[RMDB]
This 177-nucleotide RNA was probed chemically with 2A3 and DMS. Values cover nucleotides 27 to 126.
RNA sequence: GGGAACGACUCGAGUAGAGUCGAAAAGACGCUGACGGUACAGGCCAGACUAUUAUUGUCUGGUAUAGUGCAACAGCAGAACAAUUUGCUGAGGGCUAUUGAGGCGCAACAGCAUCUGUUGCAACUCGACAAUUCAUUGGUUCGCCAAUGAAUUGUCAAAAGAAACAACAACAACAAC
Reactivity to 2A3 in 0.01 (KOAc 150mM, MgCl2 10mM, bicine 150mM(pH8.5), 24C), signal-to-noise 2, nucleotides 027 to 126: g020a010c050g000c010u030g020a020c070g070g010u060a010c010a030g130g000c000c010a000g010a020c030u030a060u300u050a080u300u120g010u000c000u000g000g020u010a050u040a010g000u000g020c040a120a080c000a060g000c020a020g030a020a020c070a120a190u040u060u190g000c010u020g030a110g000g080g000c000u080a110u090u220g070a040g020g030c030g010c020a020a050c000a030g110c050a130u080c040u050g030u010u000g000c030a030a050c000u020c060
Reactivity to DMS in 0.01 (KOAc 150mM, MgCl2 10mM, bicine 150mM(pH8.5), 24C), signal-to-noise 3, nucleotides 027 to 126: g000a190c120g010c010u000g010a100c190g000g030u010a050c030a190g000g000c020c010a010g000a030c010u010a070u000u010a080u010u010g020u000c010u000g020g000u000a020u010a070g010u000g010c030a110a140c010a010g010c020a080g010a180a060c150a050a120u000u000u000g000c020u010g010a130g010g000g000c090u000a180u010u000g000a050g010g020c250g010c010a030a060c040a020g000c130a060u010c070u010g020u000u000g010c020a050a170c050u000c070